Structure probing data (2A3 and DMS) for a 177-nucleotide construct. For DMS, 3,469 sequencing reads were counted. The 2A3 profile rests on 6,040 reads. Reactivities are rounded to 0.1 and cut off at 0 and 3.
RNA sequence: GGGAACGACUCGAGUAGAGUCGAAAAGAUAUGGAGUUAUAGUGCCAGUCGGGAUCGGAAACGAUCUGCGACGGUAAUACUAUACUCCUAAGUCAAACCCUUUCGUGCCUUCGGGCACGAAAGGGAACAUACUGAAAUUCUUCGGAAUUUCAGUAUGAAAAGAAACAACAACAACAAC
Reactivity to 2A3 in 0.01 (KOAc 150mM, MgCl2 10mM, bicine 150mM(pH8.5), 24C), signal-to-noise 3, nucleotides 027 to 126: g040a020u070a040u140g010g000a020g040u300u040a010u010a010g010u010g120c130c140a060g050u020c020g030g020g000a000u000c010g000g040a040a080a050c020g000a000u000c010u160g300c000g010a010c010g000g030u030a070a030u040a030c010u010a000u000a010c010u000c000c000u000a090a020g030u000c040a020a110a300c010c000c000u010u030u020c000g000u010g020c030c010u060u140c300g050g000g070c010a010c020g010a000a000a000g000g000g000a000a000
Reactivity to DMS in 0.01 (KOAc 150mM, MgCl2 10mM, bicine 150mM(pH8.5), 24C), signal-to-noise 3, nucleotides 027 to 126: g010a020u000a300u010g010g000a020g000u000u000a010u000a010g030u000g000c060c040a110g050u000c010g010g000g000a000u000c000g000g000a080a060a140c000g020a000u000c000u000g010c010g040a020c010g010g010u000a070a100u010a180c000u000a020u000a020c000u010c000c000u000a020a100g000u000c020a120a140a190c000c000c000u000u000u000c020g010u000g000c000c000u000u010c230g010g010g020c000a000c000g000a000a010a020g010g000g020a010a050